[RMDB]
Chemical mapping of a 207-nucleotide RNA with 2A3 and DMS. The RNA was probed in 150 mM KOAc, 10 mM MgCl2 and 150 mM bicine (pH 8.5) at 24 C. The data come from the RNA Mapping Database (RMDB), library M2RFPK. The DMS profile rests on 1,555 reads.
RNA sequence: GGGAACGACUCGAGUAGAGUCGAAAACGCAGAGGGUUCUGAUAACAAAGAACCUAGAUAGCCGCAUCGGUAUUAUAGGAUGUAGUCGGUGAGCCGGCAUGCCUGCAUCGUAAGCCUAUAAGUAAAUUUAAGUGUAAUCACUUCGGUGAUUACACAACAACAGACCAAACUUCGGUUUGGUCUGUUGAAAAGAAACAACAACAACAAC
Reactivity to 2A3 in 0.01 (KOAc 150mM, MgCl2 10mM, bicine 150mM(pH8.5), 24C), signal-to-noise 2, nucleotides 027 to 156: c080g010c000a040g060a090g070g010g000u000u020c020u020g060a110u060a230a030c060a000a180a010g000a000a000c000c000u020a020g010a040u110a000g050c010c000g100c070a060u090c080g070g000u070a080u180u090a050u150a040g100g000a060u060g050u140a070g070u070c020g000g030u020g030a010g060c030c000g040g030c000a010u050g040c010c010u030g000c000a020u040c060g050u060a080a000g000c000c020u050a050u030a150a100g100u100a040a090a300u190u290u130a160a050g000u000g000u000a000a000u000c000a000c000u000u100c230g020g000u000g010a000u000u000a000c000a000c000a000a000
Reactivity to DMS in 0.01 (KOAc 150mM, MgCl2 10mM, bicine 150mM(pH8.5), 24C), signal-to-noise 1, nucleotides 027 to 156: c060g000c020a050g000a150g030g010g010u000u000c000u000g020a230u020a150a100c300a180a100a100g040a020a050c010c000u000a110g020a190u000a030g080c030c070g040c050a060u010c050g020g060u000a090u000u000a030u000a070g000g000a080u000g020u000a120g030u000c000g050g040u000g000a060g030c050c090g010g000c080a090u030g010c080c030u010g030c010a000u000c040g050u050a050a140g010c000c000u000a090u000a050a020g010u000a090a040a200u010u000u000a070a100g020u010g040u000a000a000u000c000a050c020u000u010c260g010g000u000g000a020u000u000a010c000a020c020a030a170